Structure probing data (DMS and 2A3) for a 207-nucleotide construct. The data come from the RNA Mapping Database (RMDB), library M2RFPK. The 2A3 profile rests on 1,936 reads. DMS adducts were read by reverse transcription with MarathonRT.
[RMDB]
RNA sequence: GGGAACGACUCGAGUAGAGUCGAAAAGUUAGGUGAGGCUCCUAUGCAAACACAGGCCACUGCCCAAAUAUGUCCAAAGACGCCAAUGGGUAGAACAGGGAUUGUCGGAUUAAGGCUUUCCAUAAUGAAAACAAAGUAUGCUUCGGCAUACUUUGAACUGUGAUACUUUGUUCGCAAAGUAUCACAGAAAAGAAACAACAACAACAAC
Reactivity to DMS in 0.01 (KOAc 150mM, MgCl2 10mM, bicine 150mM(pH8.5), 24C), signal-to-noise 2, nucleotides 027 to 156: g010u000u010a040g040g040u010g010a130g070g020c020u010c020c010u000a130u000g010c040a080a080a110c070a030c040a090g040g030c040c010a090c040u000g000c000c000c000a030a070a190u000a130u000g000u020c030c040a080a120a120g000a090c020g010c070c050a080a160u000g040g000g000u010a020g020a140a090c050a090g000g010g000a090u020u010g000u010c000g010g010a130u000u000a090a140g030g000c030u000u000u000c010c010a090u000a080a110u030g000a110a070a130a200c000a010a020a040g040u000a020u000g000c000u010u010c300g030g000c010a000u000a000c000u000u000u000g000a010a110
Reactivity to 2A3 in 0.01 (KOAc 150mM, MgCl2 10mM, bicine 150mM(pH8.5), 24C), signal-to-noise 3, nucleotides 027 to 156: g070u080u070a020g000g040u030g040a040g030g040c000u050c010c030u090a090u170g060c050a060a080a040c050a020c040a070g030g040c000c020a020c030u010g010c010c010c000a060a110a020u160a060u100g030u000c020c040a140a060a070g020a030c020g040c060c040a050a070u040g000g010g000u010a020g050a050a030c050a080g060g000g040a060u030u060g030u050c020g050g000a060u150u120a040a050g020g000c000u010u030u000c030c000a050u150a150a100u190g070a050a050a040a030c010a010a000a000g000u000a000u000g000c000u040u070c140g040g000c000a000u010a000c000u010u000u000g000a000a000